[RMDB]
RNA sequence: GGGAACGACUCGAGUAGAGUCGAAAAAUGUUCCGAAAUGGAGUGACUCACGCCGUCGUUGACAAUGAUCUGGAGGGAAUCGCCAAGGUGAUCCGAUGGAUGUCAUUCCUGCCGACACCCACAGAAACCCCGAGCAUUUAUUCGUAAAUGCUCGGGGAAAAGAAACAACAACAACAAC
Reactivity to DMS in 0.01 (KOAc 150mM, MgCl2 10mM, bicine 150mM(pH8.5), 24C), signal-to-noise 1, nucleotides 027 to 126: a060u020g000u010u000c130c010g050a090a070a130u020g000g000a090g090u010g010a010c040u020c100a070c300g000c000c010g010u010c030g020u020u000g000a080c170a070a080u000g010a100u010c070u010g000g000a140g000g010g000a110a220u000c050g000c020c010a120a050g000g000u000g020a090u020c030c000g060a120u090g000g000a010u050g000u060c000a020u000u040c010c000u000g030c190c120g000a010c020a040c020c000c030a150c200a120g050a100a120a040